[RMDB]
RNA sequence: GGGAACGACUCGAGUAGAGUCGAAAAGAACGACUUGUGCUUCACCAACGUCUACGCGGAUAGCUUCGUUAUCCGCGGGGACGAGGUCCGGCAGAUCGCGCCGGGGCAGACGGGCAAGAUAGCGGACGACAUGUACCGUAUUCGUACGGUACAUGUCAAAAGAAACAACAACAACAAC
Reactivity to DMS in 0.01 (KOAc 150mM, MgCl2 10mM, bicine 150mM(pH8.5), 24C), signal-to-noise 6, nucleotides 027 to 126: g020a120a120c090g010a100c090u010u000g020u010g010c030u000u000c080a070c020c010a100a180c060g010u000c000u000a090c010g020c000g000g010a030u000a000g000c050u010u010c280g020u000u000a010u000c000c000g010c010g000g000g020g000a010c000g010a160g000g010u000c020c010g010g010c020a110g000a110u010c140g000c130g010c010c010g000g000g010g010c030a040g020a090c120g000g000g010c030a030a020g000a070u010a060g000c010g010g010a200c170
Reactivity to 2A3 in 0.01 (KOAc 150mM, MgCl2 10mM, bicine 150mM(pH8.5), 24C), signal-to-noise 6, nucleotides 027 to 126: g070a080a040c040g080a050c060u070u080g040u090g090c010u060u050c030a020c040c010a180a130c010g000u000c010u020a010c010g000c010g000g000a000u000a010g020c020u170u180c250g040u030u000a000u000c000c000g000c000g010g000g000g000a000c010g000a030g000g010u000c000c000g030g000c020a040g040a300u180c080g000c030g000c090c010g000g010g020g030c010a010g030a100c070g020g030g000c010a020a010g040a090u110a040g070c050g040g040a040c080